[RMDB]
RNA sequence: GGGAACGACUCGAGUAGAGUCGAAAAAGGAUUGAGAAGAAUUUGAAAGAACUGCCGCGGAUCCUGCUUGUGAUUCUUUAAAAUGGCGAUUAUCCGCCUUCUUUUCCGGUUCUCUAACGAACACGUGUCCUAAAGAGGAUGUCAUCAUAUUUGACCAGCUUAGCAAAGCAUUCGUGCUUUGCUAAGCAAAAGAAACAACAACAACAAC
Reactivity to 2A3 in 0.01 (KOAc 150mM, MgCl2 10mM, bicine 150mM(pH8.5), 24C), signal-to-noise 2, nucleotides 027 to 156: a000g070g000a060u140u150g040a020g030a150a060g030a070a180u160u300u200g140a250a150a000g020a030a050c110u110g070c140c060g000c080g000g000a010u040c020c000u020g060c040u140u050g080u010g050a030u140u070c000u070u210u040a110a260a120a090u110g010g000c020g000a020u020u040a020u230c030c000g010c050c000u040u020c000u040u030u000u000c000c030g000g000u020u000c040u000c020u090a120a060c080g010a050a030c100a010c080g070u070g060u100c000c020u070a050a000a090g060a020g060g000a020u020g030u020c000a060u030c000a010u020a130u250u080u080g020a040c020c010a000

Source: RMDB library OK3TST, as collected in RNAgym. This 207-nucleotide RNA was probed chemically with 2A3. For 2A3, 539 sequencing reads were counted. 2A3 adducts were read by reverse transcription with SuperScript II with manganese.